[RMDB]
RNA sequence: GGGAACGACUCGAGUAGAGUCGAAAAAUCAUGGGCCAGGCACCUGGAGGGGAGUGAUGGAUGGAGUGCAGGUGCAGAUAGACAUAGACAAUAGGGAACAGGAGCCUCCACAACUGGUCGCAGUGACCAAGGCAGAUACGUUCGCGUAUCUGCCUUGAAAAGAAACAACAACAACAAC
Reactivity to 2A3 in 0.01 (KOAc 150mM, MgCl2 10mM, bicine 150mM(pH8.5), 24C), signal-to-noise 2, nucleotides 027 to 126: a000u140c090a060u120g000g010g000c000c000a000g060g010c080a020c060c010u010g010g000a010g040g040g000g030a100g010u050g010a040u190g040g000a020u080g010g000a020g020u020g080c090a040g000g050u070g000c030a000g000a060u120a020g030a040c090a100u060a020g070a030c080a080a120u110a110g010g060g030a080a000c010a050g000g010a000g000c000c000u070c040c030a010c000a160a000c060u050g010g070u060c070g010c080a030g070u060g040a010c000
Reactivity to DMS in 0.01 (KOAc 150mM, MgCl2 10mM, bicine 150mM(pH8.5), 24C), signal-to-noise 3, nucleotides 027 to 126: a050u020c110a070u000g000g000g000c020c030a070g000g000c080a040c120c140u000g000g030a100g000g010g000g000a130g020u020g000a060u010g000g000a090u020g000g000a080g040u010g010c070a100g000g030u000g010c050a110g030a130u010a180g020a050c140a060u020a060g010a050c120a010a060u060a100g000g000g040a180a080c040a050g010g020a190g000c000c020u000c020c020a070c200a150a060c090u000g000g000u000c020g010c080a100g000u030g010a060c100

An RNA of 177 nucleotides, treated with 2A3 and DMS and read out base by base. Reactivities are given for positions 27 through 126. The RNA was probed in 150 mM KOAc, 10 mM MgCl2 and 150 mM bicine (pH 8.5) at 24 C. Source: RMDB library OK1LIB, as collected in RNAgym.